[RMDB]
RNA sequence: GGGAACGACUCGAGUAGAGUCGAAAAGAUAUGGACGAAGCCAACAGCGUAUGUGGGACUCGGAAACGAGUCCGUAACAUCAUACGACAUGGCUGAGUCCUAAGUCAAAGUCGCGUUCGCGCGACAACGUUUGGAAGGAGUUCGCUCCUUCCAAACGAAAAGAAACAACAACAACAAC
Reactivity to 2A3 in 0.01 (KOAc 150mM, MgCl2 10mM, bicine 150mM(pH8.5), 24C), signal-to-noise 2, nucleotides 027 to 126: g030a010u060a050u160g000g010a000c010g010a040a030g000c010c010a100a050c110a220g130c020g000u030a010u010g020u060g010g000g000a000c010u000c000g050g020a030a030a020c020g010a000g000u000c000c000g000u010a000a010c020a150u220c010a010u030a020c020g130a130c070a080u090g000g000c000u000g000a000g000u070c000c020u010a060a000g020u000c030a170a010a000g000u010c000g000c000g010u030u060c180g010c000g020c010g120a000c000a000a000
Reactivity to DMS in 0.01 (KOAc 150mM, MgCl2 10mM, bicine 150mM(pH8.5), 24C), signal-to-noise 3, nucleotides 027 to 126: g020a040u000a300u000g020g000a000c000g000a300a040g000c000c010a030a120c280a210g010c010g020u000a000u000g010u010g010g010g000a020c000u000c000g000g000a060a050a120c000g000a000g010u000c000c000g000u000a020a170c150a030u010c030a020u000a000c000g000a070c070a220u000g000g030c010u000g000a300g010u000c000c000u000a000a120g030u000c010a060a070a130g010u000c000g050c000g010u000u030c230g040c020g010c000g000a010c000a030a050